[RMDB]
RNA sequence: GGGAACGACUCGAGUAGAGUCGAAAAGGGUGAUGUCUCCUAACCUUUAUCAAUGGGGGCACUCGGUCGUGCUGUGGGUAGAAAUUUUAUUUCGUGCCUACCUUAGACGCUUGUCGUCGGGGGUAUGUGGGACUGAUGAACUUCGGUUCAUCAGUAAGUUCCCCCUGUGAUUCGUCACAGGGGGAACAAAAGAAACAACAACAACAAC
Reactivity to 2A3 in 0.01 (KOAc 150mM, MgCl2 10mM, bicine 150mM(pH8.5), 24C), signal-to-noise 1, nucleotides 027 to 156: g070g020g010u100g010a060u060g070u030c000u050c030c000u010a080a130c000c050u100u150u230a270u170c100a040a140u140g000g000g020g010g000c010a030c050u030c000g030g000u010c020g000u010g060c000u090g030u030g000g030g000u000a020g090a020a080a010u140u210u120u130a220u080u010u090c080g070u090g000c010c000u030a050c030c000u070u050a010g000a010c000g010c030u130u200g090u140c030g000u020c010g000g000g010g000g000u040a030u040g090u150g000g020g000a000c000u010g000a010u000g010a000a000c000u000u000c130g060g010u000u000c000a000u020c000a000g020u000a000a110

An RNA of 207 nucleotides, treated with 2A3 and read out base by base. Source: RMDB library M2RFPK, as collected in RNAgym. Values cover nucleotides 27 to 156. 2A3 adducts were read by reverse transcription with SuperScript II with manganese.